RNA sequence: GGGAACGACUCGAGUAGAGUCGAAAACAAAACAAAAAGAUAGCAAAGCACGCAUGCUAUCAGAGAUAAACAAAGCAAGCGCGCUUGCUAAAAAGCGAAAGCGAAACAAAGACAAAACAAGACACAACGGUGGUAUAAAGUUCGCUUUGUGCUGCCGAAAAGAAACAACAACAACAAC
Reactivity to DMS in 0.01 (KOAc 150mM, MgCl2 10mM, bicine 150mM(pH8.5), 24C), signal-to-noise 7, nucleotides 027 to 126: c040a120a070a110a120c220a090a090a100a110a110g010a140u000a020g000c000a020a040a060g040c010a030c010g040c010a140u000g030c010u000a050u050c140a080g000a090g010a120u030a070a100a100c190a140a090a020g000c010a030a040g020c000g020c070g000c000u000u000g000c010u020a000a030a040a090a060g020c030g000a050a030a070g000c010g000a060a060a060c110a040a050a090g000a100c160a080a060a050a060c200a030a060g020a100c170a040c170a050a100
Reactivity to 2A3 in 0.01 (KOAc 150mM, MgCl2 10mM, bicine 150mM(pH8.5), 24C), signal-to-noise 9, nucleotides 027 to 126: c020a010a050a010a010c090a010a090a040a020a030g140a110u070a010g000c020a030a100a030g020c010a010c030g010c010a010u030g000c000u020a030u160c030a010g020a000g010a040u220a170a140a040c110a070a130a000g020c010a080a020g000c010g000c000g000c010u000u000g000c000u080a080a060a040a030a000g050c030g050a090a010a000g030c020g060a060a030a020c070a050a090a010g120a020c010a020a050a040a010c040a050a040g110a050c020a010c010a190a090

This 177-nucleotide RNA was probed chemically with DMS and 2A3. The DMS profile rests on 14,571 reads. The reactions ran in a buffer of 150 mM KOAc, 10 mM MgCl2 and 150 mM bicine (pH 8.5), at 24 C. It was measured as part of the RMDB library OK1LIB.